The record gives the reactivity of an RNA of 177 nucleotides to DMS and 2A3. The data come from the RNA Mapping Database (RMDB), library OK2TRN.
[RMDB]
RNA sequence: GGGAACGACUCGAGUAGAGUCGAAAAAAAAAAUUCAUGUCUGGGAAGGCCUCGAAUGCCAGGCUAAGGGUUUGGGCUUUACUUGGUUGGUAAAUGAGCAGCAGGGAACAGUUCUGGAGUGCGGCUGGCUCAUCAUAUGAUUCGUCAUAUGAUGAGCAAAAGAAACAACAACAACAAC
Reactivity to DMS in 0.01 (KOAc 150mM, MgCl2 10mM, bicine 150mM(pH8.5), 24C), signal-to-noise 3, nucleotides 027 to 126: a010a040a060a030a050a050u000u000c040a040u000g010u010c020u010g000g020g000a100a080g000g000c030c010u010c060g000a100a090u010g020c050c040a050g000g020c060u000a090a080g000g000g000u000u010u000g010g010g010c070u000u000u000a040c050u000u010g000g030u000u000g000g010u000a030a040a060u010g010a070g010c050a040g010c080a050g000g000g000a100a030c100a050g010u010u000c050u010g010g000a090g000u000g000c090g000g020c100u000g010
Reactivity to 2A3 in 0.01 (KOAc 150mM, MgCl2 10mM, bicine 150mM(pH8.5), 24C), signal-to-noise 1, nucleotides 027 to 126: a000a000a000a000a000a000u040u050c030a010u060g090u000c000u030g040g000g040a070a020g030g020c000c020u030c010g040a120a050u140g040c010c000a020g020g040c020u020a050a110g060g000g040u000u070u090g000g000g000c000u010u080u020a040c000u070u070g080g000u080u050g030g000u050a070a100a100u090g050a000g010c040a000g020c010a000g000g010g020a050a010c020a080g040u100u060c030u080g040g000a060g010u080g030c000g010g030c010u040g070

For 2A3, 1,575 sequencing reads were counted.